[RMDB]
RNA sequence: GGGAACGACUCGAGUAGAGUCGAAAAGGAAUGGCGGGACACCACUUCAGCGGAGUCCGCGUUCCAUCCUUUCUUACCUGAUGGCCGGCAUGGUCCCAGCCUCCUCGCUGGCGCCGGCUGGGCAACAGGGGAUAGUUAAGUUCGCUUAACUAUCCCCAAAAGAAACAACAACAACAAC
Reactivity to DMS in 0.01 (KOAc 150mM, MgCl2 10mM, bicine 150mM(pH8.5), 24C), signal-to-noise 2, nucleotides 027 to 126: g000g000a000a020u010g000g050c010g010g000g010a040c020a130c000c010a050c070u010u000c300a120g000c060g010g010a050g020u000c000c000g030c030g010u000u020c000c000a020u000c010c000u000u000u000c090u020u020a160c070c050u000g000a130u030g010g030c000c000g020g010c010a100u000g010g010u020c300c020c000a050g000c010c140u020c150c080u030c120g020c010u010g010g030c200g030c000c030g010g010c000u000g010g000g000c010a060a050c150a080
Reactivity to 2A3 in 0.01 (KOAc 150mM, MgCl2 10mM, bicine 150mM(pH8.5), 24C), signal-to-noise 1, nucleotides 027 to 126: g050g040a080a040u070g300g300c090g030g050g000a000c000a060c050c010a000c000u300u260c160a070g060c080g040g030a020g020u070c050c050g020c000g000u120u020c020c000a020u000c000c000u060u060u010c020u090u080a080c000c020u010g110a180u180g220g000c010c020g000g040c060a110u170g040g030u040c010c000c050a000g010c000c040u150c070c010u060c130g000c000u020g030g030c030g030c020c040g060g020c010u000g020g000g010c010a050a040c000a120
Chemical mapping of a 177-nucleotide RNA with DMS and 2A3. Conditions: 150 mM KOAc, 10 mM MgCl2 and 150 mM bicine (pH 8.5), 24 C. Reactivities are given for positions 27 through 126. 2A3 adducts were read by reverse transcription with SuperScript II with manganese.